[RMDB]
RNA sequence: GGGAACGACUCGAGUAGAGUCGAAAACAAGGGUGAGGUUGUUCGCCUAUUAAAGGGGAUCGUGAGCUGGGUUUAGACCGUCGUGAGACAGGUCGGUUGCUAUCUAACGGGGGUGUCAGGGCGGCUGGACACUAGCAGACUUCGGUCUGCUAGUGUCAAAAGAAACAACAACAACAAC
Reactivity to DMS in 0.01 (KOAc 150mM, MgCl2 10mM, bicine 150mM(pH8.5), 24C), signal-to-noise 1, nucleotides 027 to 126: c110a030a190g000g000g000u020g000a210g020g000u000u000g010u020u000c000g000c010c030u000a120u010u020a020a050a060g010g000g030g000a140u030c070g000u000g000a010g060c090u000g000g000g050u000u000u000a040g020a080c040c050g000u010c000g050u020g030a170g000a070c020a120g040g000u000c000g010g020u000u020g030c150u030a110u030c050u050a070a060c140g020g000g010g030g000u000g000u000c010a130g000g000g000c070g000g010c030u000g000
Reactivity to 2A3 in 0.01 (KOAc 150mM, MgCl2 10mM, bicine 150mM(pH8.5), 24C), signal-to-noise 2, nucleotides 027 to 126: c010a010a050g040g000g000u030g000a050g040g030u080u040g000u080u000c020g000c000c000u060a090u100u170a080a050a010g010g010g000g030a010u110c070g000u070g010a050g010c100u090g000g080g000u010u080u170a030g010a000c040c000g030u010c010g020u050g130a110g000a030c080a030g020g020u040c010g000g000u040u040g020c000u000a120u240c030u060a110a010c020g000g030g000g010g000u030g010u060c040a070g000g000g020c000g010g000c000u010g020

Annotation
Structure probing data (DMS and 2A3) for a 177-nucleotide construct. The reactions ran in a buffer of 150 mM KOAc, 10 mM MgCl2 and 150 mM bicine (pH 8.5), at 24 C. Values are in units of 0.01, from 0 to 300, in steps of 10. High DMS reactivity at an A or C suggests that its Watson-Crick edge is free. For DMS the reverse transcriptase was MarathonRT.